[RMDB]
RNA sequence: GGGAACGACUCGAGUAGAGUCGAAAAACCUCUAAGUUCGCUUAGAGGUAAUGAACGCUGCAAAAAGCAGCGCGCUCAGCGGAGCUCGCAAAAGCAACGCAAGAACACCAUUCUUCGGAAUGGUGAAGUACUAGGUCCAUUUCGAUGGACCUAGUACAAAAGAAACAACAACAACAAC
Reactivity to DMS in 0.01 (KOAc 150mM, MgCl2 10mM, bicine 150mM(pH8.5), 24C), signal-to-noise 2, nucleotides 027 to 126: a030c000c010u000c000u000a010a010g000u000u000c250g040c020u000u000a010g000a020g020g010u010a050a000u010g010a080a100c010g020c000u020g000c000a050a070a100a170a110g000c000a020g000c000g000c110g000c050u000c050a110g010c000g010g000a300g000c020u000c030g030c270a070a030a120a010g030c030a050a160c030g040c020a180a070g000a150a120c000a000c000c000a000u000u000c000u000u040c200g020g010a020a030u000g010g020u000g000a000a040
Reactivity to 2A3 in 0.01 (KOAc 150mM, MgCl2 10mM, bicine 150mM(pH8.5), 24C), signal-to-noise 2, nucleotides 027 to 126: a000c000c000u000c000u000a020a020g010u010u150c160g050c130u000u000a000g000a010g000g000u010a000a020u080g020a090a030c000g010c010u030g010c030a140a190a000a070a250g030c010a020g010c000g000c010g050c020u050c020a020g010c000g030g000a020g000c020u020c030g150c080a060a060a000a040g000c010a000a020c010g020c030a020a010g070a080a020c000a000c000c000a000u010u030c010u010u050c230g120g010a010a000u000g000g000u000g000a020a030